[RMDB]
RNA sequence: GGGAACGACUCGAGUAGAGUCGAAAAGACAGUGUAGUCUCCAGGACUGAGGCUCAGCUAAGCAACAGUGGCUGUGCAAAAUCAGCUCUAACCCGGACGGGCAGGUUAAAUCACCAAAAAAGAACUUCUCAUGUCUGGUCAAAAUAUCUGGCCAGGGAGUUUAUAUUCUGUUCGCAGAAUAUAAACUAAAAGAAACAACAACAACAAC
Reactivity to 2A3 in 0.01 (KOAc 150mM, MgCl2 10mM, bicine 150mM(pH8.5), 24C), signal-to-noise 3, nucleotides 027 to 156: g020a020c030a040g040u050g040u260a040g020u010c020u050c090c040a080g020g020a050c040u040g020a030g020g050c010u000c050a000g020c010u090a080a010g040c050a040a080c010a160g040u040g070g000c000u010g000u040g020c020a030a080a040a180u070c000a000g010c030u030c020u080a060a110c030c000c000g050g060a050c060g010g040g000c030a020g030g040u090u090a070a110a030u120c030a040c040c000a040a110a020a020a000a020g070a070a060c040u140u140c050u050c020a060u110g090u030c010u020g010g000u000c000a010a190a120a030u130a060u110c100u050g000g010c010c000a000g000g000g010
Reactivity to DMS in 0.01 (KOAc 150mM, MgCl2 10mM, bicine 150mM(pH8.5), 24C), signal-to-noise 1, nucleotides 027 to 156: g010a040c030a060g020u000g020u010a100g010u000c000u000c040c090a100g000g010a070c010u010g040a030g030g010c000u000c020a040g020c050u000a050a100g020c050a100a120c140a190g010u000g030g070c020u020g020u000g000c000a040a060a080a120u000c010a040g010c000u000c050u020a080a130c000c000c010g020g010a100c100g000g000g000c000a020g030g010u000u000a050a070a100u000c080a090c020c020a000a050a070a140a140a100g020a090a110c070u010u010c010u000c000a160u010g030u000c020u000g040g010u000c030a040a060a060a150u010a090u000c140u000g010g010c030c000a030g000g020g000
The record gives the reactivity of an RNA of 207 nucleotides to 2A3 and DMS.
Source: RMDB library OK3TST, as collected in RNAgym.